[RMDB]
RNA sequence: GGGAACGACUCGAGUAGAGUCGAAAAAAGGAAACACCAUAAAGGAGGGCAAUCCGCCCGAAGGUUUGAAAGGCUAAUAGACCAAGCCACACAGGAAUGGUUGCAAUAUGUUGCGGAAAAAGCGAGAGCUAAGCGUGUGAUUCGUCACACGCUUAGCAAAAGAAACAACAACAACAAC
Reactivity to DMS in 0.01 (KOAc 150mM, MgCl2 10mM, bicine 150mM(pH8.5), 24C), signal-to-noise 2, nucleotides 027 to 126: a090a030g010g010a100a020a030c050a050c030c000a000u000a110a090a140g000g010a210g000g040g030c040a080a090u040c150c080g030c020c000c010g000a120a110g000g000u000u000u000g000a070a080a060g000g010c020u040a040a040u040a060g010a030c100c040a070a060g010c000c000a090c130a060c120a100g000g000a070a040u000g000g010u000u000g000c040a070a060u020a060u020g010u020u010g000c000g000g010a030a070a070a030a090g010c030g000a070g000a250
Background:
Chemical mapping of a 177-nucleotide RNA with DMS. The data come from the RNA Mapping Database (RMDB), library OK2TST. For DMS the reverse transcriptase was MarathonRT. Reactivities are given for positions 27 through 126.